[RMDB]
An RNA of 207 nucleotides, treated with 2A3 and read out base by base. For 2A3 the reverse transcriptase was SuperScript II with manganese. The data come from the RNA Mapping Database (RMDB), library M2RFPK. The reactions ran in a buffer of 150 mM KOAc, 10 mM MgCl2 and 150 mM bicine (pH 8.5), at 24 C.
RNA sequence: GGGAACGACUCGAGUAGAGUCGAAAACUUAUUAGUAACUAAUCAAAAGCAAGUAUAGGAGAACAGGUUUUUAACUAUUUUUAGGCAGAUAAAAAAUAGUAUUUGACAGUCUAACACUAACUGAACACCACGCUCUCUUACUUCGGUAAGAGAGCAAGAGUCAAUAAGACUUCGGUCUUAUUGACUCAAAAGAAACAACAACAACAAC
Reactivity to 2A3 in 0.01 (KOAc 150mM, MgCl2 10mM, bicine 150mM(pH8.5), 24C), signal-to-noise 1, nucleotides 027 to 156: c000u080u110a030u090u070a240g020u080a020a160c050u070a110a140u140c040a120a130a040a070g030c000a020a020g010u030a030u060a140g050g040a060g070a070a040c050a060g070g000u000u030u050u100u050a090a010c000u000a030u000u000u000u000u000a030g030g000c070a030g000a160u080a090a010a000a000a000a000u000a000g030u010a100u100u080u060g030a020c010a030g010u000c030u030a140a020c060a050c050u060a080a010c030u070g100a100a010c000a020c060c070a050c110g010c000u000c000u020c000u000u010a000c000u040u070c040g000g000u000a000a000g000a000g000a000g000c000a010a000